RNA sequence: GGGAACGACUCGAGUAGAGUCGAAAACGGUAUUGGUCAAGGCUAUACCGACAGCGCACCUUCAAAAGGGCGCUUAAUCCCCGGCCAAGCGCUGAAAUAUGAAUAGACACCGCUGGGCUGGUAGGGCAAAACAUGGCGAUCUUCGGAUCGCCAUGAACCUCAAAUACUAGUUCGCUAGUAUUUGAGGAAAAGAAACAACAACAACAAC
Reactivity to DMS in 0.01 (KOAc 150mM, MgCl2 10mM, bicine 150mM(pH8.5), 24C), signal-to-noise 2, nucleotides 027 to 156: c040g050g030u020a000u000u000g090g020u010c050a070a130g080g000c030u000a030u000a080c030c010g030a160c140a030g030c070g000c020a110c000c000u010u010c170a080a140a180a210g010g000g020c010g050c000u000u020a000a080u000c020c000c010c020g020g020c040c020a030a020g030c020g010c020u010g000a080a130a140u010a290u020g030a200a210u010a190g010a280c050a020c060c020g010c000u000g000g020g050c020u000g000g000u000a020g000g040g030c070a070a050a050a190c030a020u000g010g030c000g020a000u000c010u000u040c300g070g010a000u000c000g010c000c000a000u000g000a010a060
Reactivity to 2A3 in 0.01 (KOAc 150mM, MgCl2 10mM, bicine 150mM(pH8.5), 24C), signal-to-noise 3, nucleotides 027 to 156: c010g000g010u030a030u060u180g060g010u120c100a100a090g140g000c000u000a000u000a030c010c000g010a030c020a030g010c000g010c040a300c100c000u060u110c050a130a090a000a000g000g000g000c000g010c000u000u010a010a010u000c010c000c000c000g000g010c000c010a020a000g010c010g000c030u050g070a010a160a050u240a080u150g110a100a060u120a120g080a020c020a010c030c020g020c010u030g010g000g010c000u020g000g070u110a080g010g020g040c060a080a070a020a050c000a000u000g010g000c020g000a000u000c000u020u000c030g090g020a000u010c010g010c010c000a000u000g000a010a000
This 207-nucleotide RNA was probed chemically with DMS and 2A3. The 2A3 profile rests on 2,091 reads. DMS (dimethyl sulfate) methylates the pairing face of unpaired adenines and cytosines.